Structure probing data (2A3) for a 207-nucleotide construct.
The 2A3 profile rests on 556 reads.
Conditions: 150 mM KOAc, 10 mM MgCl2 and 150 mM bicine (pH 8.5), 24 C.
The data come from the RNA Mapping Database (RMDB), library M2RFPK.

RNA sequence: GGGAACGACUCGAGUAGAGUCGAAAACGUGUCCGUCGGCGUAGCCGACAACAUGCCGAGGUAGCCCAGACCUUCAAGGCUACGGUGCGUUGCGACGCACGGUCUGAUUCUUCACAACGACGUUCACAAGAUCGGAUCACUUUCGAGUGAUCCGAAACCACCAUGGCAAUUUCGAUUGCCAUGGUGGAAAAGAAACAACAACAACAAC
Reactivity to 2A3 in 0.01 (KOAc 150mM, MgCl2 10mM, bicine 150mM(pH8.5), 24C), signal-to-noise 1, nucleotides 027 to 156: c000g010u000g000u030c130c100g010u000c000g040g000c180g090u100a050g020c000c000g070a000c000a000a010c040a000u030g000c000c010g050a000g000g020u000a010g010c020c090c100a030g000a000c010c000u020u030c020a030a050g000g000c000u000a000c000g000g000u030g020c020g000u000u170g110c190g050a020c000g020c000a000c000g000g040u000c020u010g000a010u040u100c020u130u130c080a070c040a280a000c010g090a020c060g000u040u090c100a070c060a240a000g010a190u100c000g010g000a000u000c000a000c000u080u150u300c180g080a010g000u000g000a020u000c000c000g000a000a000a000